[RMDB]
RNA sequence: GGGAACGACUCGAGUAGAGUCGAAAAAACACCGUGAGUGGCUUGGUCGAUUCUAUGUAAAUAAUGUCGGGUGUUUCGACUUCAUUGCUUGACAAUGUCGCAGUUGGUUCUUCAUUAGAUUCGACGAAAUAAUCACUCGACUCGUCCAUAGAGUCCAAAGAGAUCAACUGUUCGCAGUUGAUCUCUUAAAAGAAACAACAACAACAAC
Reactivity to 2A3 in 0.01 (KOAc 150mM, MgCl2 10mM, bicine 150mM(pH8.5), 24C), signal-to-noise 2, nucleotides 027 to 156: a010a000c040a000c000c010g030u060g050a070g010u090g070g000c080u030u020g080g030u130c010g000a000u050u000c000u030a040u050g060u110a040a100a150u190a050a100u220g020u030c010g020g020g010u010g010u010u010u120c040g060a060c000u000u030c060a050u030u040g010c040u110u250g050a180c010a010a030u040g020u020c040g010c060a040g010u010u010g010g020u040u010c000u040u050c010a170u060u070a000g020a020u090u050c020g010a010c000g020a020a000a150u190a030a010u070c000a000c000u000c000g000a000c000u020c070g130u020c080c010a010u030a020g020a000g000u000c010c000a040
Reactivity to DMS in 0.01 (KOAc 150mM, MgCl2 10mM, bicine 150mM(pH8.5), 24C), signal-to-noise 2, nucleotides 027 to 156: a030a040c000a100c020c020g010u010g010a170g030u000g010g000c130u000u000g020g000u010c000g010a050u000u000c000u000a010u000g020u010a080a050a070u000a060a060u010g010u000c010g020g010g020u020g010u000u000u000c050g020a080c040u000u000c030a040u000u000g000c020u010u020g020a110c050a030a040u010g030u000c030g040c050a150g020u000u000g000g010u010u010c010u010u000c120a100u010u000a020g040a060u000u010c020g000a050c000g030a050a040a070u000a080a100u000c040a030c020u010c010g000a040c000u000c070g000u010c150c070a110u010a120g010a090g010u000c000c050a120